[RMDB]
RNA sequence: GGGAACGACUCGAGUAGAGUCGAAAAGAUAUGGACGUCCUGACAAGCAUCGAUCUAUAUGGAGGCUAUAUGGUCGGAAACGACCAUAUAGUGAAGUAUAGGGAGCUUGGAGGGACGUCCUAAGUCACUUAGAUCAUAAGUUCGCUUAUGAUCUAAGAAAAGAAACAACAACAACAAC
Reactivity to DMS in 0.01 (KOAc 150mM, MgCl2 10mM, bicine 150mM(pH8.5), 24C), signal-to-noise 7, nucleotides 027 to 126: g020a050u010a300u000g000g010a020c010g040u000c000c000u010g020a300c010a020a000g010c010a300u000c200g010a040u020c010u000a000u000a010u000g000g010a300g020g000c010u010a000u000a010u000g010g000u000c000g000g000a090a080a220c000g010a020c000c000a000u000a000u000a000g000u000g000a190a250g000u000a010u000a000g010g010g000a020g010c000u000u000g000g000a300g000g000g000a020c010g010u000c000c000u000a010a060g000u010c040a210
Reactivity to 2A3 in 0.01 (KOAc 150mM, MgCl2 10mM, bicine 150mM(pH8.5), 24C), signal-to-noise 3, nucleotides 027 to 126: g020a020u080a060u140g000g010a010c000g010u020c000c010u050g020a030c010a000a000g030c010a190u300c050g060a030u050c000u000a010u000a020u040g100g010a080g300g000c000u000a010u000a000u000g000g030u000c000g000g020a080a060a020c010g000a010c000c010a000u000a000u000a000g000u020g010a000a000g000u010a010u010a010g010g010g010a000g000c020u010u020g000g010a000g010g000g010a000c000g000u000c000c000u000a000a000g000u010c000a000
Source: RMDB library TTRINS, as collected in RNAgym. Structure probing data (DMS and 2A3) for a 177-nucleotide construct. The DMS profile rests on 7,574 reads. For 2A3, 16,798 sequencing reads were counted.